Source: RMDB library OK2TST, as collected in RNAgym. This 177-nucleotide RNA was probed chemically with 2A3 and DMS. High 2A3 reactivity points to a flexible backbone, as in loops and unpaired stretches. For DMS the reverse transcriptase was MarathonRT. For 2A3, 2,946 sequencing reads were counted. For 2A3 the reverse transcriptase was SuperScript II with manganese. The reactions ran in a buffer of 150 mM KOAc, 10 mM MgCl2 and 150 mM bicine (pH 8.5), at 24 C.

[RMDB]
RNA sequence: GGGAACGACUCGAGUAGAGUCGAAAAGGCAGCUCAACAUUCGACACUCUUAGUCAUGCCAUCGGCAACUGCCACAUGCUAAUGGUGUUGGACAACUGUGAGCACGUGUUGGAUGCGUGCGCCGAGCGGUAGGACUGAGUUUCGACUCAGUCCUACCAAAAGAAACAACAACAACAAC
Reactivity to 2A3 in 0.01 (KOAc 150mM, MgCl2 10mM, bicine 150mM(pH8.5), 24C), signal-to-noise 3, nucleotides 027 to 126: g050g000c030a040g000c010u010c020a010a120c010a070u050u030c000g010a010c000a000c020u010c010u040u040a020g070u210c010a000u020g030c070c030a200u100c060g020g000c060a270a270c280u300g000c010c000a030c000a040u020g000c000u010a010a000u030g040g000u010g010u040u030g060g000a010c040a110a070c150u090g020u050g180a010g050c010a000c010g040u050g070u050u290g130g030a080u230g000c000g020u020g000c030g000c010c040g010a020g010c080
Reactivity to DMS in 0.01 (KOAc 150mM, MgCl2 10mM, bicine 150mM(pH8.5), 24C), signal-to-noise 3, nucleotides 027 to 126: g020g000c040a120g030c040u000c050a140a110c130a180u000u000c000g030a000c030a020c010u010c200u000u010a040g020u000c000a020u000g000c060c140a070u000c180g000g000c000a250a120c200u000g010c020c040a300c020a050u000g000c000u000a010a010u010g000g020u000g010u000u000g010g010a020c120a110a080c140u010g000u010g020a100g000c010a010c040g000u000g000u010u000g000g000a150u000g000c010g010u000g000c070g020c030c050g000a050g000c140